[RMDB]
An RNA of 177 nucleotides, treated with DMS and 2A3 and read out base by base. For 2A3, 5,693 sequencing reads were counted. 2A3 adducts were read by reverse transcription with SuperScript II with manganese. Conditions: 150 mM KOAc, 10 mM MgCl2 and 150 mM bicine (pH 8.5), 24 C.
RNA sequence: GGGAACGACUCGAGUAGAGUCGAAAAGCCCAUUUCUUCGGAAAUGGGCAAACGCUCAACUCUUGGAGCGCACGACGGAUCACCAUCGAUUCGACAUGAGAAAAACGGGGCGGUUCGCCGCCCCGAACUUAAACAGUUUGUUCGCAAACUGUUUAAGAAAAGAAACAACAACAACAAC
Reactivity to DMS in 0.01 (KOAc 150mM, MgCl2 10mM, bicine 150mM(pH8.5), 24C), signal-to-noise 2, nucleotides 027 to 126: g010c010c000c000a000u000u000u000c010u000u000c170g010g010a010a000a010u000g010g010g020c020a010a020a050c020g000c000u000c000a100a070c070u010c030u000u000g020g000a020g000c000g030c090a060c120g020a080c020g010g000a040u010c020a070c260c210a110u010c120g010a050u000u010c000g000a120c040a050u000g010a090g000a110a080a090a100a130c020g020g000g010g050c000g000g010u000u010c160g010c000c000g000c000c000c000c000g000a010a010
Reactivity to 2A3 in 0.01 (KOAc 150mM, MgCl2 10mM, bicine 150mM(pH8.5), 24C), signal-to-noise 4, nucleotides 027 to 126: g000c010c010c000a010u000u000u010c030u030u060c140g110g010a010a000a000u000g000g010g020c010a030a000a000c010g000c000u010c010a040a120c030u030c020u060u050g040g000a010g020c020g030c070a040c140g160a010c020g010g020a010u030c020a040c180c090a180u190c130g000a010u020u000c000g020a020c030a070u130g020a050g030a050a070a010a020a040c000g000g000g010g010c000g010g040u050u040c180g020c060c000g010c010c000c000c010g010a000a000